[RMDB]
RNA sequence: GGGAACGACUCGAGUAGAGUCGAAAAGACUGUGUGCUGGGAUGACUGGGGGCUGGUCCCCAGGCUCCCCUGCUAGGGGAUGACCCAAGCCCGGCCUGCCCGGCCCCUGCGGCCCCCUCCUUGGCCACCUAAGAUUGUACUUCGGUACAAUCUUAGGAAAAGAAACAACAACAACAAC
Reactivity to DMS in 0.01 (KOAc 150mM, MgCl2 10mM, bicine 150mM(pH8.5), 24C), signal-to-noise 1, nucleotides 027 to 126: g020a060c030u010g000u010g020u000g010c020u000g000g000g020a180u010g010a070c020u000g000g010g020g020g040c200u000g010g000u010c020c020c050c040a040g020g000c060u000c020c000c000c020u000g020c200u020a070g000g020g010g000a070u010g010a130c030c030c010a080a100g010c020c010c020g010g000c020c030u000g020c030c030c040g000g010c030c020c060c150u010g000c080g020g000c010c010c020c020c000u000c020c020u010u000g000g020c060c100a110